[RMDB]
RNA sequence: GGGAACGACUCGAGUAGAGUCGAAAAAAGGCAUGGUUAUUCAAAACCGUUCAAAGCAUACGACGCUCGUCGUUAGGUUUUGCUUUGAACGGUCGCACGCAGGAAUGUGUGUGGGGUUCCGGAAACGCCUAGAAAGCUAUUUCGAUAGCUUUCUAGGAAAAGAAACAACAACAACAAC
Reactivity to DMS in 0.01 (KOAc 150mM, MgCl2 10mM, bicine 150mM(pH8.5), 24C), signal-to-noise 5, nucleotides 027 to 126: a060a030g000g010c040a050u010g010g000u000u000a070u010u010c070a090a080a110a060c000c000g000u010u000c000a010a010a010g010c000a010u000a040c020g000a010c000g000c060u040c280g020u020c000g010u000u000a050g040g020u010u010u000u000g000c010u010u000u000g010a000a000c000g010g000u000c020g020c020a020c020g020c010a020g010g040a130a100u000g010u000g010u000g020u000g010g000g010g000u000u000c020c020g010g010a090a120a120c200g010
Reactivity to 2A3 in 0.01 (KOAc 150mM, MgCl2 10mM, bicine 150mM(pH8.5), 24C), signal-to-noise 9, nucleotides 027 to 126: a000a000g090g010c070a070u130g030g030u140u130a070u140u110c070a080a070a060a030c000c000g000u000u000c000a000a000a000g000c000a010u000a030c020g010a000c010g060c110u190c180g300u110c010g030u080u080a210g040g090u080u110u070u040g000c000u000u000u000g000a000a000c000g000g000u000c010g000c000a000c010g000c010a010g030g130a150a120u040g010u000g000u000g000u020g030g020g000g020u040u020c010c000g000g010a070a100a010c030g000
The record gives the reactivity of an RNA of 177 nucleotides to DMS and 2A3. 2A3 adducts were read by reverse transcription with SuperScript II with manganese. For DMS the reverse transcriptase was MarathonRT. The reactions ran in a buffer of 150 mM KOAc, 10 mM MgCl2 and 150 mM bicine (pH 8.5), at 24 C.